The record gives the reactivity of an RNA of 177 nucleotides to DMS and 2A3. The reactions ran in a buffer of 150 mM KOAc, 10 mM MgCl2 and 150 mM bicine (pH 8.5), at 24 C. For DMS the reverse transcriptase was MarathonRT. The data come from the RNA Mapping Database (RMDB), library M2PK90. 2A3 is a SHAPE reagent: it acylates the 2'-hydroxyl of flexible nucleotides of all four kinds.
RNA sequence: GGGAACGACUCGAGUAGAGUCGAAAAUUAAAGAGCGUAGCACACACUCAGACUAAGUCUGACACACACAUACGCUAAUCUUCUCUGUGUGUGUUCGAGAUAUCGAUAAGUGUAUGAGAUGAAAAAACAUCUCACCUACGUUCGCGUAGGUGAGAUGAAAAGAAACAACAACAACAAC
Reactivity to DMS in 0.01 (KOAc 150mM, MgCl2 10mM, bicine 150mM(pH8.5), 24C), signal-to-noise 2, nucleotides 027 to 126: u000u000a100a060a140g000a170g000c000g020u000a020g000c160a050c070a030c020a030c070u000c010a020g000a000c070u000a100a160g000u010c000u000g010a030c000a030c000a000c000a010c010a080u000a050c080g020c030u000a070a060u000c060u000u000c020u000c070u000g010u000g020u000g000u000g030u030u000c050g000a030g000a150u030a080u000c040g010a090u020a040a020g040u000g040u000a060u000g010a040g000a010u000g010a000a020a030a100a070a150
Reactivity to 2A3 in 0.01 (KOAc 150mM, MgCl2 10mM, bicine 150mM(pH8.5), 24C), signal-to-noise 1, nucleotides 027 to 126: u190u090a100a100a010g100a000g000c010g000u000a020g000c030a010c000a000c000a000c090u000c020a030g030a040c050u170a260a060g040u000c000u010g020a000c010a010c000a000c000a010c000a010u030a050c020g020c040u040a040a070u010c030u080u030c020u000c000u000g020u000g010u000g000u000g000u000u010c010g010a010g070a110u130a040u170c020g000a020u010a080a020g010u000g020u020a070u080g040a030g020a020u070g130a100a010a000a000a000a040